[RMDB]
Overview
Chemical mapping of a 177-nucleotide RNA with DMS and 2A3. The reactions ran in a buffer of 150 mM KOAc, 10 mM MgCl2 and 150 mM bicine (pH 8.5), at 24 C. The 2A3 profile rests on 1,435 reads. Reactivities are given for positions 27 through 126. For DMS the reverse transcriptase was MarathonRT.
RNA sequence: GGGAACGACUCGAGUAGAGUCGAAAAUAAGUAAUACAAGAAGGCAAUUUACGCUCCAGAUAUCUUGACUAGCUCAAACUUCAAAGUCCAGAAACCUUUCUCCUGAUUCUGCACUUCUUGUCUGGGGUCAGUGGAGUCGAUUCGUCGACUCCACUGAAAAAGAAACAACAACAACAAC
Reactivity to DMS in 0.01 (KOAc 150mM, MgCl2 10mM, bicine 150mM(pH8.5), 24C), signal-to-noise 2, nucleotides 027 to 126: u030a090a070g000u040a170a140u050a040c100a040a040g000a070a030g010g000c060a090a110u030u000u050a120c150g010c020u000c000c000a040g010a060u010a030u010c030u010u020g000a090c030u010a030g000c120u000c060a040a110a080c210u000u010c090a010a050a020g000u000c040c000a040g000a020a030a120c070c020u010u060u020c090u020c020c030u000g000a060u000u060c050u000g000c110a070c030u000u010c060u000u000g000u020c010u000g000g000g000g000
Reactivity to 2A3 in 0.01 (KOAc 150mM, MgCl2 10mM, bicine 150mM(pH8.5), 24C), signal-to-noise 3, nucleotides 027 to 126: u210a030a000g200u090a070a110u060a050c040a090a000g090a000a030g050g010c040a030a060u110u060u110a110c100g010c030u010c050c000a000g000a050u040a020u100c060u050u040g040a040c060u040a020g050c010u030c120a110a200a090c090u240u040c040a110a120a020g040u000c040c020a000g030a050a100a070c010c030u090u100u000c030u040c010c010u050g010a070u120u020c040u060g000c050a090c140u070u030c000u080u090g020u020c030u030g000g010g030g030